[RMDB]
RNA sequence: GGGAACGACUCGAGUAGAGUCGAAAAGCCGACUGCACGUGCGUGCGAGCAGAUUUCGAAAUCGCACGUUUCACGUAAAGACCCAACUCUACUCGAUGCGAGGGUCAGCAAGCAAGCAGCAAUAAAACACACCGAGAUGAUUCGUCAUCUCGGUGUGAAAAGAAACAACAACAACAAC
Reactivity to 2A3 in 0.01 (KOAc 150mM, MgCl2 10mM, bicine 150mM(pH8.5), 24C), signal-to-noise 1, nucleotides 027 to 126: g040c030c030g040a020c030u060g010c060a000c000g000u020g000c010g000u000g010c020g000a010g010c060a050g060a210u050u210u240c070g080a030a100a130u000c000g020c000a010c010g000u040u090u030c010a000c010g020u020a060a000a100g030a000c010c010c000a020a040c000u000c000u030a030c000u000c000g020a020u060g020c000g040a050g040g000g000u020c020a000g010c050a050a020g010c020a030a010g060c010a040g020c020a040a040u080a130a080a040a000
Reactivity to DMS in 0.01 (KOAc 150mM, MgCl2 10mM, bicine 150mM(pH8.5), 24C), signal-to-noise 2, nucleotides 027 to 126: g000c050c040g020a100c110u010g000c210a040c010g010u000g010c010g020u000g000c000g000a020g000c200a160g020a220u000u010u000c120g030a120a190a120u000c000g010c010a010c000g010u010u000u010c060a010c000g020u000a010a160a080g000a140c020c040c010a070a080c000u000c010u000a000c000u000c010g000a030u000g030c030g020a070g000g020g000u000c010a050g030c040a030a030g030c080a070a030g040c060a080g020c070a090a130u000a060a020a180a220